[RMDB]
RNA sequence: GGGAACGACUCGAGUAGAGUCGAAAAUUCGGCCUCGCACUGCUUUUCCAGUGCCCUCUACAUGCCGUCGCCGAAGCAUCCCUAAUUCGAAUCAGUACGCGAUCCUGUCGCCAUCCAGCGGCGCGGCACAGUUUUGCUGUUUCGACAGCAAAACUGUAAAAGAAACAACAACAACAAC
Reactivity to DMS in 0.01 (KOAc 150mM, MgCl2 10mM, bicine 150mM(pH8.5), 24C), signal-to-noise 2, nucleotides 027 to 126: u000u010c010g000g020c170c070u010c040g000c010a080c050u010g000c190u000u040u040u000c220c020a140g040u000g040c060c010c030u040c050u030a140c160a060u020g050c060c000g010u000c080g050c030c000g010a130a090g070c050a110u000c030c000c000u010a080a130u020u020c080g000a000a010u010c030a040g000u000a150c140g000c010g000a100u000c060c090u000g010u050c000g020c070c040a110u000c110c030a060g010c000g000g000c000g000c000g000g000c030
Reactivity to 2A3 in 0.01 (KOAc 150mM, MgCl2 10mM, bicine 150mM(pH8.5), 24C), signal-to-noise 4, nucleotides 027 to 126: u030u010c030g010g000c000c000u020c020g010c010a020c010u030g070c040u080u080u120u050c050c000a010g000u020g030c000c000c000u160c030u080a130c030a100u080g000c000c010g050u090c040g000c000c000g050a040a020g090c020a090u040c000c000c000u050a090a170u060u080c050g040a010a060u080c040a040g080u070a070c030g010c030g070a080u120c010c040u090g030u030c000g000c010c000a060u070c040c010a030g040c010g020g000c010g000c010g000g000c000